[RMDB]
RNA sequence: GGGAACGACUCGAGUAGAGUCGAAAAUAAAAUCAAAUAUCGUUACUCGACAAUUUGGACGAUUACGAAUACAAGGACCAGCUGUUAUUACCGCAAGUUCAAUACAGUUACCACCAGAAAUAGAAACCAUCCAUACGGUUUUCGAACCGUAUGGAUGAAAAGAAACAACAACAACAAC
Reactivity to 2A3 in 0.01 (KOAc 150mM, MgCl2 10mM, bicine 150mM(pH8.5), 24C), signal-to-noise 2, nucleotides 027 to 126: u050a010a010a000a060u070c050a020a070a070u120a070u040c020g040u020u070a150c070u020c070g090a050c140a270a190u050u180u220g040g020a020c020g030a030u030u030a060c060g070a030a010u060a130c030a050a110g010g020a050c070c020a020g000c020u020g040u190u070a020u070u140a000c020c000g000c120a080a010g020u080u110c030a010a010u090a020c020a000g010u070u020a050c010c020a010c000c000a060g120a130a080a010u120a060g110a090a010a000c010
Reactivity to DMS in 0.01 (KOAc 150mM, MgCl2 10mM, bicine 150mM(pH8.5), 24C), signal-to-noise 2, nucleotides 027 to 126: u050a050a100a080a120u010c020a020a070a140u000a080u010c020g000u010u000a040c150u010c070g030a120c080a120a150u000u020u010g020g000a120c040g020a070u000u010a060c060g020a090a050u000a120c070a050a110g000g010a070c040c040a040g010c010u000g000u000u000a050u000u000a050c120c030g000c200a040a130g010u000u000c140a050a140u000a050c070a000g020u030u000a090c140c030a040c060c070a150g010a020a050a080u010a100g020a120a050a070c190
The record gives the reactivity of an RNA of 177 nucleotides to 2A3 and DMS. For DMS the reverse transcriptase was MarathonRT.